The record gives the reactivity of an RNA of 177 nucleotides to 2A3 and DMS.
For 2A3 the reverse transcriptase was SuperScript II with manganese.
It was measured as part of the RMDB libraries RFM100 and RFMREP.
Values cover nucleotides 27 to 126.
The RNA was probed in 150 mM KOAc, 10 mM MgCl2 and 150 mM bicine (pH 8.5) at 24 C.
DMS (dimethyl sulfate) methylates the pairing face of unpaired adenines and cytosines.

[RMDB]
RNA sequence: GGGAACGACUCGAGUAGAGUCGAAAAGAAAGAAAGGGGCAGUGAUGACGAUUUUGAGAAAGUCAUGCACCACUCUGAUAUUAUCUGUGCUGAUAAAUCUCUCAUACCCAUAUGUUUCUGAGCCCAACCUUCGAAUGAUGUUCGCAUCAUUCGAAGGAAAAGAAACAACAACAACAAC
Reactivity to 2A3 in 0.01 (KOAc 150mM, MgCl2 10mM, bicine 150mM(pH8.5), 24C), signal-to-noise 5, nucleotides 027 to 126: g030a000a060a000g090a030a060a010g020g000g040g020c130a100g080u020g040a040u140g030a020c070g050a070u020u030u120u160g200a210g100a040a040a050g050u030c000a000u110g060c010a000c030c010a030c020u100c040u030g040a050u080a090u210u130a080u050c060u070g030u020g090c040u020g010a030u030a080a060a100u000c020u000c000u000c010a000u040a070c000c000c010a040u100a020u150g020u010u010u000c010u010g030a030g020c000c010c000a020a040
Reactivity to DMS in 0.01 (KOAc 150mM, MgCl2 10mM, bicine 150mM(pH8.5), 24C), signal-to-noise 2, nucleotides 027 to 126: g000a080a020a010g000a100a120a080g000g000g010g030c030a160g010u000g000a010u010g000a020c070g000a090u010u000u030u030g010a150g030a120a060a170g010u000c040a000u040g000c020a020c000c200a180c090u020c140u000g000a150u030a080u010u000a020u000c090u000g000u000g010c050u020g000a030u000a020a040a010u010c000u000c000u000c050a040u000a070c000c000c020a100u020a060u010g010u000u010u000c020u000g000a150g000c000c000c000a130a210